[RMDB]
RNA sequence: GGGAACGACUCGAGUAGAGUCGAAAAGAUAUGGAUCAAGAAAUUCUCUAUUCCACGGGAGGCUGGUGUUCGGAAACGAACAUCCAGCCGAAGAACGUGGAGAUAGAGAAUUUCUUGAUCCUAAGUCGAAAAUACUAUACUUCGGUAUAGUAUUUUCAAAAGAAACAACAACAACAAC
Reactivity to DMS in 0.01 (KOAc 150mM, MgCl2 10mM, bicine 150mM(pH8.5), 24C), signal-to-noise 1, nucleotides 027 to 126: g000a100u010a300u010g020g000a010u000c000a010a020g020a010a010a020u010u000c000u000c000u010a030u000u000c000c000a010c000g000g000g010a100g010g030c020u000g020g030u000g000u000u000c000g020g010a150a140a270c000g000a030a000c020a000u020c010c000a020g010c010c000g010a040a050g000a100a200c010g030u000g000g000a030g010a020u000a000g010a010g000a000a000u000u000u000c010u000u000g000a000u000c000c000u000a000a090g000u000c100
An RNA of 177 nucleotides, treated with DMS and read out base by base. The data come from the RNA Mapping Database (RMDB), library TTRINS.